[RMDB]
Structure probing data (2A3 and DMS) for a 177-nucleotide construct. The RNA was probed in 150 mM KOAc, 10 mM MgCl2 and 150 mM bicine (pH 8.5) at 24 C. Reactivities are given for positions 27 through 126.
RNA sequence: GGGAACGACUCGAGUAGAGUCGAAAAGCUAUAAUCGAUCGAUCGUAUAUAAUCGGCAUGCGCUACGGCGCGCCGGCAUGCUAAUCGUAUACGGCAUGCGCGCAUUAGCAUGCGCCGAUAUCGCGGCUAAUCGCACCUAAUUCGUUAGGUGCGAUUAAAAAGAAACAACAACAACAAC
Reactivity to 2A3 in 0.01 (KOAc 150mM, MgCl2 10mM, bicine 150mM(pH8.5), 24C), signal-to-noise 4, nucleotides 027 to 126: g040c020u060a040u100a290a170u170c050g070a030u040c070g040a060u020c030g100u040a110u020a030u040a250a110u040c010g010g000c000a040u130g010c020g000c000u030a030c110g060g000c020g000c000g000c000c010g040g000c000a010u010g020c010u030a080a080u120c080g050u120a050u030a170c090g030g010c030a030u090g000c040g010c010g000c040a040u060u050a000g000c030a010u070g030c010g000c010c000g020a010u010a010u050c010g000c000g010g000c010
Reactivity to DMS in 0.01 (KOAc 150mM, MgCl2 10mM, bicine 150mM(pH8.5), 24C), signal-to-noise 5, nucleotides 027 to 126: g010c040u000a070u010a100a070u010c040g010a060u010c080g000a100u010c050g010u000a080u010a090u000a090a070u000c020g010g010c010a040u000g000c020g010c060u010a060c100g010g000c010g010c050g010c060c150g010g010c030a000u010g010c020u000a080a060u010c190g010u000a080u000a050c130g010g010c040a060u000g010c070g010c040g000c080a040u000u000a050g000c040a040u000g010c020g000c020c010g010a060u000a050u000c100g010c040g000g000c060
Background: The 2A3 profile rests on 5,451 reads. For DMS, 6,477 sequencing reads were counted. It was measured as part of the RMDB library OK2TRN.